RNA sequence: GGGAACGACUCGAGUAGAGUCGAAAAAGAACUGACCAACCCUCCCUAUCAUGAGCUAGCUCUGGAGGGACUGAAGACCCGACCUGCGGUCCCGUACAAGGUCGAAACAAUAGGAGUGAUAGGCACAAGCUAUGUAUGUCUUCGGACAUACAUAGCUAAAAGAAACAACAACAACAAC
Reactivity to DMS in 0.01 (KOAc 150mM, MgCl2 10mM, bicine 150mM(pH8.5), 24C), signal-to-noise 3, nucleotides 027 to 126: a080g020a060a080c110u000g020a090c060c020a150a140c010c030c010u010c140c010c020u000a070u000c050a050u000g020a150g000c050u000a150g010c030u010c040u010g000g020a240g010g000g000a030c060u000g000a070a070g000a150c090c020c020g010a080c080c020u000g000c080g010g030u000c000c010c020g000u000a150c070a050a030g020g000u000c000g020a110a080a030c160a040a130u010a080g000g010a150g000u000g000a070u000a050g000g000c230a040c230a090
Reactivity to 2A3 in 0.01 (KOAc 150mM, MgCl2 10mM, bicine 150mM(pH8.5), 24C), signal-to-noise 1, nucleotides 027 to 126: a030g100a070a040c080u110g060a050c050c000a010a080c000c010c000u010c000c000c030u060a040u090c030a100u090g030a020g130c020u070a020g000c000u020c020u060g030g010a040g000g000g020a010c020u030g030a020a010g040a050c110c030c060g040a050c020c020u050g000c030g020g000u040c000c040c000g050u120a070c040a070a000g010g060u070c050g060a060a150a000c080a070a130u070a120g010g050a040g050u040g050a040u070a040g050g000c070a030c000a150